Conditions: 150 mM KOAc, 10 mM MgCl2 and 150 mM bicine (pH 8.5), 24 C. This 207-nucleotide RNA was probed chemically with 2A3. Reactivities are given for positions 27 through 156. The 2A3 profile rests on 1,156 reads. The data come from the RNA Mapping Database (RMDB), library OK3TST.
[RMDB]
RNA sequence: GGGAACGACUCGAGUAGAGUCGAAAACACUGCUGCUAGUGGUAAUCGCUAUUGCUUAGUAAACAAUACCGAAGGUGCCACACAGAAUUGUUCUAUUAAUGAUUGCAUUGAUGAGGGAAGUCUUAUUUGGCAUCUUAUGAACUGGAGCUUCAGCUGGGUUCUGCAGAACAUUCGUGUUCUGCAGAACAAAAGAAACAACAACAACAAC
Reactivity to 2A3 in 0.01 (KOAc 150mM, MgCl2 10mM, bicine 150mM(pH8.5), 24C), signal-to-noise 2, nucleotides 027 to 156: c060a010c020u040g030c000u010g020c040u070a040g010u000g070g010u060a080a080u040c020g000c020u030a010u010u080g020c020u040u060a060g020u220a140a140a020c010a050a050u020a030c060c000g070a040a020g100g060u050g000c000c000a020c000a000c020a030g090a120a050u110u030g010u110u000c030u040a110u110u050a100a050u110g110a090u090u300g060c040a030u030u090g020a080u100g080a150g000g070g030a060a070g050u030c010u160u090a220u040u080u040g030g020c010a020u020c040u040u130a180u100g040a030a010c050u060g040g060a020g030c000u070u080c030a020g020c030u050g030g010